[RMDB]
RNA sequence: GGGAACGACUCGAGUAGAGUCGAAAAUGCUAAAAUUGCAGACACUAGGACCAUGUCUUGGUUUUUGCAAUAAUGCUAGCAGAGUACACACAAGAAGAAAAGUAACAGCACUAGAUUGUAAAGACUGACUUUAUCGUUAGUUCGCUAACGAUAAAGUAAAAGAAACAACAACAACAAC
Reactivity to 2A3 in 0.01 (KOAc 150mM, MgCl2 10mM, bicine 150mM(pH8.5), 24C), signal-to-noise 9, nucleotides 027 to 126: u070g000c010u040a100a040a020a010u010u000g000c000a000g000a010c010a000c030u020a000g010g000a010c050c110a300u300g000u000c000u010u010g000g000u000u000u000u030u000g000c000a010a000u090a080a040u140g080c050u040a010g020c020a000g020a020g100u180a020c070a000c020a000c020a070a040g110a080a020g070a020a180a030a000g050u110a150a020c020a030g050c020a010c060u080a050g050a300u040u070g040u070a060a040a020g040a030c020u020g010
Reactivity to DMS in 0.01 (KOAc 150mM, MgCl2 10mM, bicine 150mM(pH8.5), 24C), signal-to-noise 9, nucleotides 027 to 126: u010g010c000u000a020a080a090a030u000u000g010c000a010g010a010c030a020c010u000a010g010g000a010c010c230a180u040g010u010c000u000u000g000g000u000u000u000u000u000g000c010a010a010u000a090a140u010g010c160u000a030g010c020a030g010a120g020u020a060c090a090c110a080c150a070a100g000a080a090g000a060a050a080a050g010u020a040a070c080a060g000c070a060c090u010a080g000a130u000u000g010u000a060a060a060g010a080c030u010g000
Source information: The record gives the reactivity of an RNA of 177 nucleotides to 2A3 and DMS. It was measured as part of the RMDB libraries RFM100 and RFMREP. For 2A3 the reverse transcriptase was SuperScript II with manganese. The reactions ran in a buffer of 150 mM KOAc, 10 mM MgCl2 and 150 mM bicine (pH 8.5), at 24 C.